[RMDB]
RNA sequence: GGGAACGACUCGAGUAGAGUCGAAAAGUUUAUGCAAAGGCACUUCGCAAUGUGUGCUCAAACAUUGCUUAUUCAAACAGGCUUCACAAUGUGCGACAAAGAAACAUUGUUAUAAGAGCUAAUGUUUACCACGCCUAAAGGUUCGCCUUUAGGCGAAGAUCCCACGUUACUUCGGUAACGUGGGAUCAAAAGAAACAACAACAACAAC
Reactivity to 2A3 in 0.01 (KOAc 150mM, MgCl2 10mM, bicine 150mM(pH8.5), 24C), signal-to-noise 3, nucleotides 027 to 156: g020u140u180u170a050u100g040c040a020a050a150g120g000c000a000c050u190u090c090g000c050a060a090u070g040u020g090u000g000c070u130c230a070a070a000c020a020u050u000g000c010u010u150a160u190u130c090a030a050a000c000a020g050g030c030u090u060c050a000c000a030a010u000g000u020g080c070g100a090c120a060a240a000g130a060a110a000c000a000u010u010g050u050u050a140u050a150a120g030a000g000c000u030a190a000u070g000u000u030u030a070c000c000a010c010g000c000c010u010a020a000a000g020g010u020u100c250g170c000c040u000u000u000a000g010g000c000g010a000a000

Structure probing data (2A3) for a 207-nucleotide construct. For 2A3, 1,063 sequencing reads were counted. It was measured as part of the RMDB library M2RFPK. Values cover nucleotides 27 to 156.